An RNA of 207 nucleotides, treated with DMS and 2A3 and read out base by base.
RNA sequence: GGGAACGACUCGAGUAGAGUCGAAAAUCACACCAAGGAUCAGAUGCAGCACAGCUUUGACGUUUCUACGCACGCCCAUGAUGCUGUUGAGGUAGAUGGUGACAAUAGCGAAGAUGAUGGUGAGUAUGGCCAGACCUAGAUGUCGCCCGGCCUGUGGCAUCCUACACGAAUUCGUUCGUGUAGGAUGAAAAGAAACAACAACAACAAC
Reactivity to DMS in 0.01 (KOAc 150mM, MgCl2 10mM, bicine 150mM(pH8.5), 24C), signal-to-noise 2, nucleotides 027 to 156: u010c050a110c060a190c020c050a120a110g000g000a080u000c040a120g020a140u000g000c000a050g020c040a070c070a100g000c060u000u000u000g000a050c080g030u000u000u000c080u000a090c120g030c040a090c040g010c030c020c040a180u000g020a050u000g020c010u000g020u000u000g000a090g020g020u000a080g010a120u010g030g030u010g000a030c040a020a080u000a060g020c060g000a050a080g020a060u000g000a040u010g010g030u010g000a130g040u000a120u000g040g020c020c020a180g030a040c070c030u000a100g010a070u000g010u010c030g000c020c020c020g020g000c020c000u000g000u000g020g030
Reactivity to 2A3 in 0.01 (KOAc 150mM, MgCl2 10mM, bicine 150mM(pH8.5), 24C), signal-to-noise 5, nucleotides 027 to 156: u090c010a040c010a010c040c040a070a060g100g000a050u080c020a030g040a130u090g020c020a010g050c020a030c010a050g030c000u090u090u120g100a090c050g040u040u070u030c020u120a030c050g050c060a030c030g020c010c020c000a060u130g050a050u070g030c040u000g020u080u050g030a030g010g050u060a060g020a150u040g000g000u020g010a010c020a010a080u050a080g040c040g060a040a020g020a050u060g000a020u030g010g030u050g010a070g030u070a070u140g010g000c020c000a000g020a070c010c010u070a070g010a140u110g010u020c010g030c040c020c000g060g000c010c010u030g000u040g070g000

The reactions ran in a buffer of 150 mM KOAc, 10 mM MgCl2 and 150 mM bicine (pH 8.5), at 24 C. 2A3 adducts were read by reverse transcription with SuperScript II with manganese.